The record gives the reactivity of an RNA of 177 nucleotides to 2A3. Conditions: 150 mM KOAc, 10 mM MgCl2 and 150 mM bicine (pH 8.5), 24 C.
RNA sequence: GGGAACGACUCGAGUAGAGUCGAAAACGGGUCUUCGGCGACGUGCUGCGCCCGGACACCGACAUCGAGGUCACCCACACCGCCGAGUCGCGCUAUAUGGCCGAGCGGAUCACCUACCGGACCGCGGGUGAGCGAGGUCGUUCGCGACCUCGCUCACAAAAGAAACAACAACAACAAC
Reactivity to 2A3 in 0.01 (KOAc 150mM, MgCl2 10mM, bicine 150mM(pH8.5), 24C), signal-to-noise 2, nucleotides 027 to 126: c070g010g000g000u000c030u230u090c240g040g030c070g060a300c170g250u300g000c030u030g000c000g020c020c020c010g000g070a010c100a060c010c000g000a000c060a080u050c060g080a020g000g080u090c030a040c030c000c000a000c000a000c000c000g000c000c000g010a040g030u060c080g000c040g000c110u150a140u050a090u280g140g050c000c060g040a000g070c020g000g000a000u090c000a070c030c000u040a080c010c000g000g090a020c000c000g000c040g090g040